[RMDB]
An RNA of 207 nucleotides, treated with 2A3 and read out base by base. The RNA was probed in 150 mM KOAc, 10 mM MgCl2 and 150 mM bicine (pH 8.5) at 24 C. It was measured as part of the RMDB library OK3TST.

RNA sequence: GGGAACGACUCGAGUAGAGUCGAAAAAGAGGACUGUCCUAUGGCCAAGCAUGAGACCACUGUUCUUGAACAGUUCAAGGACAGGUCCCUUGUGAGCAGCCUUUUUGAGGAACUUCCCAACAUCAAGCGGGAAGCAGAAAGGAAGCAAAUUGAGUCGGCCCGAUGAUUAUUUCGAUAAUCAUCGGGCAAAAGAAACAACAACAACAAC
Reactivity to 2A3 in 0.01 (KOAc 150mM, MgCl2 10mM, bicine 150mM(pH8.5), 24C), signal-to-noise 1, nucleotides 027 to 156: a000g170a070g020g010a100c040u060g020u090c030c040u120a080u150g000g000c080c010a010a010g040c010a070u080g030a070g000a110c000c000a040c150u030g010u050u030c080u050u100g040a060a040c030a080g000u060u050c010a010a000g010g010a000c000a000g000g060u000c000c010c000u060u020g080u040g000a060g030c070a010g000c000c000u060u050u020u070u140g130a120g070g020a100a000c000u010u000c010c000c010a030a000c040a080u150c030a100a000g100c010g040g010g010a010a010g000c020a000g000a020a100a000g010g030a020a000g040c020a000a020a270u020u070g030a030g020u000c010g060